[RMDB]
RNA sequence: GGGAACGACUCGAGUAGAGUCGAAAAGAUAUGGAGCAGCCCACGUGGCAACAGCACGGAUCGGAAACGAUCCGUGACAUGCCACUGGGACCCUGCUCCUAAGUCAAACCGGGCGUUCGCGCCCGGAUCAUGGUAUACCCUUCGGGGUAUACCAUGAAAAAGAAACAACAACAACAAC
Reactivity to 2A3 in 0.01 (KOAc 150mM, MgCl2 10mM, bicine 150mM(pH8.5), 24C), signal-to-noise 1, nucleotides 027 to 126: g040a010u120a060u180g000g000a010g040c020a000g070c060c000c000a070c230g000u010g000g010c020a080a080c060a290g090c000a020c010g030g020a000u010c000g010g040a110a060a050c000g010a000u000c020c000g000u000g000a020c020a030u010g000c000c000a000c000u000g000g020g010a010c140c000c040u000g000c000u000c000c000u030a140a030g040u030c050a060a040a100c000c010g000g000g000c010g040u070u120c300g030c000g010c140c010c030g000g000a010
Reactivity to DMS in 0.01 (KOAc 150mM, MgCl2 10mM, bicine 150mM(pH8.5), 24C), signal-to-noise 2, nucleotides 027 to 126: g000a050u000a300u000g000g000a030g000c000a030g020c030c000c000a010c270g010u000g000g000c000a020a070c230a170g010c010a010c000g000g010a000u000c000g000g000a110a110a280c000g040a000u000c000c010g000u000g000a000c090a120u000g000c000c000a010c000u010g000g000g000a090c160c300c010u010g010c000u000c000c000u000a010a100g020u010c040a110a120a160c010c010g000g000g040c020g060u000u020c190g060c030g050c000c010c000g000g000a010

This 177-nucleotide RNA was probed chemically with 2A3 and DMS. Values cover nucleotides 27 to 126. Conditions: 150 mM KOAc, 10 mM MgCl2 and 150 mM bicine (pH 8.5), 24 C. For DMS the reverse transcriptase was MarathonRT. As a SHAPE reagent, 2A3 marks flexible, mostly unpaired nucleotides at the ribose 2'-OH. The data come from the RNA Mapping Database (RMDB), library TTRDES. For 2A3 the reverse transcriptase was SuperScript II with manganese.